[RMDB]
RNA sequence: GGGAACGACUCGAGUAGAGUCGAAAAUUGCCAAGCAAGAGAGUUCAGCGCCACAGCUUCAAGAGCAGCUUGCUUAGAGGCCAUUCACACAUUUUAGUUAGCAUUAGCAUUGCCAAGCAAGGCGCAGGCAGAGAGAGAGUUUUAGGCAGCAAGCAGCGUGGAUCACAUUAUUCGUAAUGUGAUCCACAAAAGAAACAACAACAACAAC
Reactivity to DMS in 0.01 (KOAc 150mM, MgCl2 10mM, bicine 150mM(pH8.5), 24C), signal-to-noise 3, nucleotides 027 to 156: u000u010g010c000c060a070a060g020c030a060a110g000a140g020a130g010u000u000c010a070g040c010g030c020c090a120c120a120g000c030u000u000c090a050a140g010a180g000c050a170g020c070u000u010g010c050u000u000a130g010a120g040g020c020c040a130u000u000c070a120c050a060c060a140u010u000u000u000a090g020u010u000a100g020c030a070u010u000a090g000c030a130u000u000g010c020c030a080a130g010c040a090a090g000g000c050g000c060a070g010g010c010a050g020a090g010a080g010a130g000a130g000u020u000u010u000a110g010g000c020a070g000c060a050a050g020c030a110g020c130
Reactivity to 2A3 in 0.01 (KOAc 150mM, MgCl2 10mM, bicine 150mM(pH8.5), 24C), signal-to-noise 5, nucleotides 027 to 156: u050u040g020c010c000a010a010g020c010a060a010g060a010g010a010g090u100u130c080a050g040c030g020c050c050a120c040a050g020c020u070u050c090a130a070g010a020g050c030a000g030c030u010u030g010c000u030u040a070g030a060g100g020c040c000a020u120u120c040a030c010a020c020a110u030u050u050u130a080g030u050u070a010g020c060a100u070u020a010g030c050a050u020u130g040c020c030a050a020g020c030a060a050g070g000c010g020c020a000g030g000c040a000g010a000g000a000g000a000g000a000g020u000u040u080u120a030g020g010c010a010g000c030a080a000g020c020a000g040c000